[RMDB]
RNA sequence: GGGAACGACUCGAGUAGAGUCGAAAAGGAUACAACAUCACUGACUUCUUUCAUAUUGCAUCGGAUCUCGGCGAUAGUGAGGCAUAUGAAACCUUUGUUGAUGCGGCGCAUGAUCGAGGGAUGACGGUAUUAUUUGAUCUUGUAUUGAAUCACUCUGGUGAAUAUGAUCAUUCGUGAUCAUAUUCACAAAAGAAACAACAACAACAAC
Reactivity to DMS in 0.01 (KOAc 150mM, MgCl2 10mM, bicine 150mM(pH8.5), 24C), signal-to-noise 2, nucleotides 027 to 156: g000g010a150u010a110c030a100a070c000a030u000c010a050c030u010g010a080c070u010u010c030u010u010u000c030a060u000a100u010u010g040c040a090u010c040g020g000a020u000c020u000c070g010g020c120g020a100u000a060g020u020g020a050g000g030c010a090u000a100u010g000a100a060a050c030c070u010u000u000g010u000u000g020a050u010g020c040g030g050c040g000c070a080u010g010a070u000c080g010a110g000g000g030a040u000g010a080c050g000g020u010a080u000u000a160u000u000u000g010a080u000c060u010u000g020u010a120u000u000g010a100a120u000c050a100c050u000c030u000g010
Reactivity to 2A3 in 0.01 (KOAc 150mM, MgCl2 10mM, bicine 150mM(pH8.5), 24C), signal-to-noise 8, nucleotides 027 to 156: g080g000a010u040a050c040a050a010c010a070u040c020a020c050u040g100a050c020u070u040c020u040u120u030c040a050u080a090u130u190g010c020a050u040c040g110g030a110u020c050u030c070g130g020c070g090a060u050a070g130u100g050a030g030g000c020a030u060a030u140g000a060a040a030c010c010u080u070u130g060u060u080g040a050u030g020c020g060g000c040g000c030a030u080g030a060u080c050g020a040g000g030g000a020u060g040a030c050g020g010u050a070u160u030a070u090u180u090g030a030u010c000u030u030g030u050a060u050u060g070a040a040u090c030a030c100u080c050u130g040
The record gives the reactivity of an RNA of 207 nucleotides to DMS and 2A3.
Reactivities are rounded to 0.1 and cut off at 0 and 3.
2A3 is a SHAPE reagent: it acylates the 2'-hydroxyl of flexible nucleotides of all four kinds.
The 2A3 profile rests on 7,667 reads.
DMS adducts were read by reverse transcription with MarathonRT.